This 177-nucleotide RNA was probed chemically with DMS and 2A3.
Source: RMDB library OK2TST, as collected in RNAgym.
DMS adducts were read by reverse transcription with MarathonRT.
The DMS profile rests on 3,541 reads.
The RNA was probed in 150 mM KOAc, 10 mM MgCl2 and 150 mM bicine (pH 8.5) at 24 C.
The 2A3 profile rests on 4,833 reads.
In probing experiments dimethyl sulfate is read out at A N1 and C N3, which are open when not base-paired.
RNA sequence: GGGAACGACUCGAGUAGAGUCGAAAAUCGAACUGGGCGGCCAUAUGGCGUCCUUCCAGUCUUCCGCAACCAUUUAUGAUGUGUGCUUUAACCACUUCUUCCGUGCACGCAACGAGCAGGAUGGCGGCCGUUACUGAAAGUUCGCUUUCAGUAACGGAAAAGAAACAACAACAACAAC
Reactivity to DMS in 0.01 (KOAc 150mM, MgCl2 10mM, bicine 150mM(pH8.5), 24C), signal-to-noise 4, nucleotides 027 to 126: u020c150g020a090a050c050u000g010g010g000c250g010g000c020c030a150u000a100u010g000g020c060g000u000c040c050u020u000c010c040a050g010u000c070u000u010c010c000g010c040a120a110c040c030a050u000u000u000a070u020g010a090u000g000u000g000u010g010c020u000u000u010a090a150c100c070a060c130u020u000c070u010u000c050c060g010u000g020c030a050c050g000c050a020a050c080g000a090g030c120a110g010g000a040u000g010g020c090g020g000
Reactivity to 2A3 in 0.01 (KOAc 150mM, MgCl2 10mM, bicine 150mM(pH8.5), 24C), signal-to-noise 3, nucleotides 027 to 126: u080c020g000a010a020c020u020g000g000g000c000g100g090c040c060a110u180a260u300g090g000c000g040u040c010c000u020u000c010c010a020g030u000c020u080u030c020c010g040c070a070a080c020c010a050u050u120u080a160u260g080a080u020g040u000g000u010g020c000u120u110u160a080a070c070c040a110c060u110u000c000u140u010c080c060g110u060g010c000a010c030g020c010a030a050c040g040a010g040c060a010g020g040a030u050g030g010c020g000g010